Structure probing data (DMS and 2A3) for a 177-nucleotide construct. For DMS the reverse transcriptase was MarathonRT. For DMS, 2,218 sequencing reads were counted. Source: RMDB library M2PK50, as collected in RNAgym. The RNA was probed in 150 mM KOAc, 10 mM MgCl2 and 150 mM bicine (pH 8.5) at 24 C. For 2A3 the reverse transcriptase was SuperScript II with manganese.
RNA sequence: GGGAACGACUCGAGUAGAGUCGAAAACUUAACGCGUUCGCGCGUUAAGAAACAACAUAAACAUCGAGUUGACGUUGACACAAAUACCGUCAGUGUAGACGGAAAGCAUUCGCUUCGGCGAAUGCAAGUUGAACAAUAGCUUCGGCUAUUGUUCAACAAAAGAAACAACAACAACAAC
Reactivity to DMS in 0.01 (KOAc 150mM, MgCl2 10mM, bicine 150mM(pH8.5), 24C), signal-to-noise 3, nucleotides 027 to 126: c000u000u020a000a000c000g000c000g050u000u000c240g010c010g030c010g000u000u020a000a000g000a070a090a120c090a050a020c030a100u020a110a100a070c010a100u020c080g000a130g010u000u000g000a110c170g000u010u000g000a150c260a080c110a040a040a090u010a070c000c020g010u000c010a150g030u000g000u010a130g000a010c010g000g000a060a080a080g000c000a010u000u000c000g050c000u000u020c210g010g020c010g020a000a010u000g040c000a000a040
Reactivity to 2A3 in 0.01 (KOAc 150mM, MgCl2 10mM, bicine 150mM(pH8.5), 24C), signal-to-noise 2, nucleotides 027 to 126: c000u000u000a000a000c010g000c030g070u030u080c180g020c000g000c020g120u000u010a000a000g000a000a030a000c020a000a000c010a070u280a070a070a010c000a110u100c090g060a030g130u030u110g100a000c050g010u000u060g090a060c030a000c010a170a120a020u150a180c010c000g000u020c010a060g150u110g160u300a100g000a000c000g040g000a050a030a000g000c000a010u010u020c010g030c030u000u020c190g150g010c000g000a020a000u050g010c000a000a000